[RMDB]
RNA sequence: GGGAACGACUCGAGUAGAGUCGAAAAGAUAUGGAAUUUGCAGAGGAACUACACGUGACGUUCGGAAACGAACGCACGUGCCGACGAAGCAAAUUCCUAAGUCAAAAGUACAGCUUCGGCUGUACAACUAUAUCGUUCUCUUCGGAGAACGAUAUAGAAAAGAAACAACAACAACAAC
Reactivity to DMS in 0.01 (KOAc 150mM, MgCl2 10mM, bicine 150mM(pH8.5), 24C), signal-to-noise 4, nucleotides 027 to 126: g000a030u000a300u000g010g000a020a000u000u000u000g010c000a020g010a300g000g010a090a070c100u010a140c010a010c000g020u000g000a180c000g040u000u000c010g010g000a070a060a170c000g010a000a000c010g010c000a000c000g000u000g010c070c100g000a180c070g010a300a180g000c010a010a000a010u000u000c000c000u000a010a060g000u000c040a090a080a100a130g000u000a000c000a010g000c000u000u000c260g040g000c000u000g020u000a000c010a080a130
Reactivity to 2A3 in 0.01 (KOAc 150mM, MgCl2 10mM, bicine 150mM(pH8.5), 24C), signal-to-noise 3, nucleotides 027 to 126: g010a000u030a040u080g000g010a000a010u000u010u010g000c020a000g020a060g140g030a120a140c140u230a060c300a010c020g040u030g300a140c000g000u010u010c000g010g010a040a050a020c010g010a010a010c000g010c000a000c000g000u000g000c010c030g090a120c030g010a030a000g000c000a000a000a000u000u000c000c000u010a040a010g030u000c020a060a090a000a150g000u010a000c000a010g000c010u090u110c260g190g000c010u000g000u000a000c000a010a000
Overview:
Structure probing data (DMS and 2A3) for a 177-nucleotide construct. Conditions: 150 mM KOAc, 10 mM MgCl2 and 150 mM bicine (pH 8.5), 24 C. For DMS the reverse transcriptase was MarathonRT. For 2A3 the reverse transcriptase was SuperScript II with manganese. For 2A3, 7,974 sequencing reads were counted.